[RMDB]
RNA sequence: GGGAACGACUCGAGUAGAGUCGAAAAGAUAUGGAUUAGCUUCAAUGAGAGUGACGCGAUAAGACCGACUCGGAAACGAGUUAGGUCUUUUGACGCGUAACACUCUCAUUGAAGCUAAUCCUAAGUCCUACAUCUAACAGUUCGCUGUUAGAUGUAGAAAAGAAACAACAACAACAAC
Reactivity to DMS in 0.01 (KOAc 150mM, MgCl2 10mM, bicine 150mM(pH8.5), 24C), signal-to-noise 5, nucleotides 027 to 126: g000a100u000a300u010g010g010a010u010u000a000g010c000u010u000c000a010a000u000g010a020g010a020g040u000g040a090c010g000c000g000a180u000a020a010g000a010c000c010g000a010c000u000c000g000g000a110a110a230c000g010a020g000u000u000a030g080g000u000c000u000u000u010u000g010a220c090g020c000g000u000a070a080c010a010c000u000c000u000c000a000u000u000g000a000a000g000c000u000a000a000u000c000c000u000a010a110g000u000c050